Conditions: 150 mM KOAc, 10 mM MgCl2 and 150 mM bicine (pH 8.5), 24 C. Structure probing data (2A3 and DMS) for a 207-nucleotide construct. For 2A3, 4,830 sequencing reads were counted. The DMS profile rests on 4,978 reads.
[RMDB]
RNA sequence: GGGAACGACUCGAGUAGAGUCGAAAAUGUGCCAUUAUGCCACUUGUUGUUCGUACAACAAUUGGCACAACUUUCACUGACACCUCCCAGAGUGGAAGGGAUCGUUGUGCGGACAGCAGGUGGUACAACUUUCACUGGGAGAGGUGGAAGUGGAAAACGUGUCCACACUGUUCGCAGUGUGGAUACGAAAAGAAACAACAACAACAAC
Reactivity to 2A3 in 0.01 (KOAc 150mM, MgCl2 10mM, bicine 150mM(pH8.5), 24C), signal-to-noise 3, nucleotides 027 to 156: u150g010u060g060c000c020a040u090u070a070u190g020c000c000a010c000u000u000g010u000u010g000u000u020c010g000u010a000c000a010a000c010a060a130u080u140g110g060c050a010c000a000a010c000u000u000u000c000a000c000u050g110a040c010a050c030c010u010c000c000c000a020g010a000g020u000g000g020a000a010g010g000g010a040u080c020g000u000u010g000u000g000c000g010g000a010c000a000g010c000a000g000g000u000g000g000u000a020c000a000a000c000u020u020u000c000a010c010u010g010g000g020a040g010a050g000g000u000g000g000a000a000g010u010g020g020a010a050a010a040
Reactivity to DMS in 0.01 (KOAc 150mM, MgCl2 10mM, bicine 150mM(pH8.5), 24C), signal-to-noise 2, nucleotides 027 to 156: u000g000u000g000c020c060a100u000u000a070u000g010c010c010a020c050u000u000g020u000u000g030u010u000c110g010u010a040c000a020a010c010a090a120u010u010g020g110c050a060c030a050a070c040u000u000u000c010a040c010u000g000a220c020a040c060c060u000c000c020c000a080g000a100g010u010g010g010a010a010g000g000g010a070u000c040g010u020u010g000u000g000c050g000g030a030c050a030g000c030a040g000g020u000g000g050u010a010c020a050a040c010u000u000u010c010a050c010u000g050g030g030a160g000a140g010g010u000g000g010a030a030g020u000g010g000a080a070a090a210